The record gives the reactivity of an RNA of 177 nucleotides to 2A3 and DMS. The reactions ran in a buffer of 150 mM KOAc, 10 mM MgCl2 and 150 mM bicine (pH 8.5), at 24 C. Values cover nucleotides 27 to 126. 2A3 adducts were read by reverse transcription with SuperScript II with manganese. In probing experiments dimethyl sulfate is read out at A N1 and C N3, which are open when not base-paired. DMS adducts were read by reverse transcription with MarathonRT. Source: RMDB library OK2TST, as collected in RNAgym. The 2A3 profile rests on 10,787 reads.
RNA sequence: GGGAACGACUCGAGUAGAGUCGAAAAGAGUUCAAGUACGCCAGUUCGCUGACCAUGAUGCUGCAGCAGCAGCAACAGCUCGACUCGCAACAACAGCAACAGCAGCAACAAUUGCUGCCGGCGCAGCUCUACAGUAACACUUCGGUGUUACUGUAGAAAAAGAAACAACAACAACAAC
Reactivity to 2A3 in 0.01 (KOAc 150mM, MgCl2 10mM, bicine 150mM(pH8.5), 24C), signal-to-noise 6, nucleotides 027 to 126: g050a010g020u090u150c090a070a030g060u030a060c060g020c020c020a010g020u050u090c050g020c040u020g050a100c030c040a110u140g020a050u090g050c000u010g000c000a090g030c030a030g010c000a000g000c000a110a020c010a030g020c020u030c030g030a040c010u010c040g020c010a030a120c020a020a020c010a060g020c000a010a030c010a040g000c010a010g030c010a010a050c040a200a300u150u060g000c010u000g000c000c000g010g000c020g010c010a020g030c020
Reactivity to DMS in 0.01 (KOAc 150mM, MgCl2 10mM, bicine 150mM(pH8.5), 24C), signal-to-noise 7, nucleotides 027 to 126: g010a070g010u010u000c060a060a100g030u000a090c160g020c020c020a060g010u000u000c130g020c020u010g000a080c080c100a100u000g020a080u000g010c010u000g020c010a170g020c160a170g000c020a020g000c020a030a070c090a110g000c040u000c060g010a040c020u000c040g000c040a070a070c090a060a090c140a080g010c010a040a170c080a060g000c010a020g030c010a040a170c210a110a150u000u000g020c010u000g010c010c040g010g000c300g000c040a120g010c130